RNA sequence: GGGAACGACUCGAGUAGAGUCGAAAAGCAGUUCCAGAGUGUGAGGACUCUGAACUCGAAGGUAGAUGACCUCCUCACAGGUCAAAGAGAUAUUGAUAGGCAAGUAUCAGGAUCUCACUACCGACAUACUUGUCUAUGUCAACUCGAGGAACUGAGAGAUAGUGCUGCUAUUCGUAGCAGCACUAUCAAAAGAAACAACAACAACAAC
Reactivity to DMS in 0.01 (KOAc 150mM, MgCl2 10mM, bicine 150mM(pH8.5), 24C), signal-to-noise 3, nucleotides 027 to 156: g000c010a070g000u010u010c030c030a190g000a070g010u010g010u000g060a100g010g020a090c070u020c020u010g010a130a050c040u000c060g000a140a190g000g000u000a080g000a220u010g010a050c000c040u000c020c060u000c090a100c070a070g040g000u000c070a070a110a150g010a070g020a080u000a100u000u000g010a040u000a030g010g020c100a040a080g000u010a020u000c030a160g000g000a050u000c040u020c150a180c060u000a100c010c000g000a120c200a000u000a000c020u000u000g010u000c010u010a020u000g020u000c030a090a060c010u000c010g000a110g020g000a030a040c010u000g000a130g000a200
Reactivity to 2A3 in 0.01 (KOAc 150mM, MgCl2 10mM, bicine 150mM(pH8.5), 24C), signal-to-noise 4, nucleotides 027 to 156: g070c010a000g000u020u000c010c010a020g010a010g030u050g000u020g010a010g020g020a020c000u010c030u100g080a070a040c040u050c130g080a110a070g090g030u150a040g020a180u050g030a030c000c010u010c000c010u010c010a010c010a010g020g100u030c050a050a040a000g030a010g000a020u050a030u160u070g010a000u010a010g060g030c050a030a010g020u020a000u040c090a050g040g040a050u030c050u060c140a060c060u150a100c010c000g000a010c020a040u020a010c000u030u060g010u020c010u010a010u010g020u040c020a040a040c000u010c020g020a070g010g000a020a010c000u010g020a020g000a000